[RMDB]
RNA sequence: GGGAACGACUCGAGUAGAGUCGAAAAUCAUAUAAUGAGUGUAAUAUGAUACUUAAACGCACUUACUAAUUUAAAUAUUUACACAUCAGAGUGGGAGUAUGUUCUCCCACAUGCGCAUAACAGCAUUAAUCAAGAUAGUAUACUAUAUGCAAGUAUAUGUCUGAAACCAGUUCGCUGGUUUCAGACAAAAAGAAACAACAACAACAAC
Reactivity to 2A3 in 0.01 (KOAc 150mM, MgCl2 10mM, bicine 150mM(pH8.5), 24C), signal-to-noise 1, nucleotides 027 to 156: u030c020a040u090a000u020a150a110u100g020a000g010u030g010u010a060a060u040a070u030g080a050u090a130c050u100u140a020a110a070c050g010c020a050c030u080u110a050c000u150a050a140u040u230u150a030a120a000u060a050u020u070u120a020c050a000c000a100u000c130a030g010a080g180u030g000g040g000a000g000u000a110u300g040u150u040c000u030c000c030c000a000c000a000u000g000c050g000c020a020u030a150a030c050a080g010c010a020u000u240a040a000u160c140a160a000g000a080u030a000g010u000a000u000a020c020u000a000u010a080u090g000c000a000a000g000u000a000u000a030